[RMDB]
RNA sequence: GGGAACGACUCGAGUAGAGUCGAAAAGAUCACCUGUUCGCAGGUGAUCAAUCUCCCACUUGAUCGAAGUGUCACAGCCUCGUUGCCCACGAGGCACGGGCGUAUUGAUCCGCUUCGGCGGAUCAAAACCACAAGGCUAGUUCGCUAGCCUUGUGGUAAAAGAAACAACAACAACAAC
Reactivity to 2A3 in 0.01 (KOAc 150mM, MgCl2 10mM, bicine 150mM(pH8.5), 24C), signal-to-noise 1, nucleotides 027 to 126: g000a000u040c000a000c000c000u010g000u040u060c240g020c040a010g010g000u000g010a000u010c000a010a000u050c020u040c000c010c010a040c040u080u200g060a130u140c090g120a230a020g100u050g030u170c030a040c010a090g020c000c010u090c050g050u140u070g030c000c030c000a130c130g010a280g000g000c000a000c000g000g010g030c020g000u000a030u000u070g000a000u000c020c000g020c000u060u060c180g070g000c010g000g020a000u000c000a010a000a000
Reactivity to DMS in 0.01 (KOAc 150mM, MgCl2 10mM, bicine 150mM(pH8.5), 24C), signal-to-noise 2, nucleotides 027 to 126: g210a020u000c000a000c020c010u000g000u010u020c230g020c020a010g000g020u000g010a000u000c000a090a090u000c130u000c000c010c010a120c120u000u000g020a070u020c060g000a110a090g020u000g000u000c080a050c300a090g010c000c000u000c050g000u010u010g020c040c020c010a150c200g000a210g010g000c000a000c050g010g010g020c040g030u000a020u000u000g000a000u000c000c000g000c000u000u000c140g000g000c010g020g000a000u000c000a000a000a080